[RMDB]
The data come from the RNA Mapping Database (RMDB), library OK3TST. Chemical mapping of a 207-nucleotide RNA with DMS and 2A3. The reactions ran in a buffer of 150 mM KOAc, 10 mM MgCl2 and 150 mM bicine (pH 8.5), at 24 C. 2A3 adducts were read by reverse transcription with SuperScript II with manganese.
RNA sequence: GGGAACGACUCGAGUAGAGUCGAAAAUCGUGUACACGAGAGUUCGAGAGAUCGAGAGUACGAGAGUACGUGUACGAGUUCUCUCGUACUCACACGAGUGAGUGAGUUCACGUGUACUCUCGAUCACGUGUGUUCGAGUGAACUCACACUCGAUCGAAUGAAACGUUGUAUUCGUACAACGUUUCAUAAAAGAAACAACAACAACAAC
Reactivity to DMS in 0.01 (KOAc 150mM, MgCl2 10mM, bicine 150mM(pH8.5), 24C), signal-to-noise 2, nucleotides 027 to 156: u000c010g050u000g000u000a070c060a100c010g000a120g030a060g000u000u000c040g020a120g010a210g020a160u000c030g020a080g010a070g010u010a020c000g000a110g010a120g040u000a000c030g030u020g060u000a090c100g000a230g020u000u000c030u010c000u000c020g020u000a030c020u000c020a010c050a070c030g000a140g030u000g010a140g050u010g000a180g000u000u010c010a050c040g000u000g000u000a040c000u000c010u000c000g020a090u000c020a030c040g000u000g010u020g010u000u000c010g000a090g020u010g010a050a110c070u000c040a150c000a130c050u000c010g000a050u020c030g000a150
Reactivity to 2A3 in 0.01 (KOAc 150mM, MgCl2 10mM, bicine 150mM(pH8.5), 24C), signal-to-noise 5, nucleotides 027 to 156: u070c010g000u020g020u080a040c070a040c050g020a030g000a010g070u020u050c020g010a020g000a020g000a130u020c030g000a010g000a000g030u000a000c000g000a010g000a010g080u070a020c060g040u080g060u140a100c090g060a050g030u050u000c010u000c000u000c000g000u000a010c010u010c020a000c000a000c000g060a110g030u070g000a030g020u110g050a060g040u060u030c020a020c050g030u040g000u020a000c000u000c010u000c010g000a020u030c010a010c060g010u050g010u020g010u040u010c010g010a030g010u060g060a070a050c010u030c060a030c010a010c020u000c000g020a030u020c030g080a050